[RMDB]
RNA sequence: GGGAACGACUCGAGUAGAGUCGAAAACAAGAUCGUUAUAUUGGUUGAACUCUAGAUAAAAUGCAGAUCGUAUGGUCUUGUACCGACGACAGAUCAUUCAAAUGUCUGCCCUAUCAUCUUUUGAUGGGCCGCAUUACUAGUUCGCUAGUAAUGCGGCAAAAGAAACAACAACAACAAC
Reactivity to DMS in 0.01 (KOAc 150mM, MgCl2 10mM, bicine 150mM(pH8.5), 24C), signal-to-noise 2, nucleotides 027 to 126: c040a080a100g020a030u000c020g000u000u000a080u030a100u000u000g030g020u000u000g020a060a090c130u070c020u010a090g020a170u000a090a020a100a100u000g020c170a190g030a060u010c150g040u000a040u010g010g000u040c000u000u050g020u150a100c050c020g000a060c090g010a060c010a090g050a070u000c100a060u000u030c130a010a060a040u010g020u000c030u000g000c040c070c040u010a130u000c020a030u000c220u000u000u000u010g040a040u020g010g040
Reactivity to 2A3 in 0.01 (KOAc 150mM, MgCl2 10mM, bicine 150mM(pH8.5), 24C), signal-to-noise 3, nucleotides 027 to 126: c030a000a020g070a100u050c050g100u100u090a080u020a070u130u170g040g030u050u050g050a090a050c070u030c050u100a070g010a130u090a130a160a010a010u150g010c050a010g000a120u020c010g020u030a080u070g040g010u000c020u080u090g030u110a080c020c100g100a100c050g000a000c030a000g050a040u100c010a020u080u070c050a040a030a040u130g000u000c000u010g000c020c010c000u050a060u030c000a020u010c110u000u300u010u110g060a090u020g000g010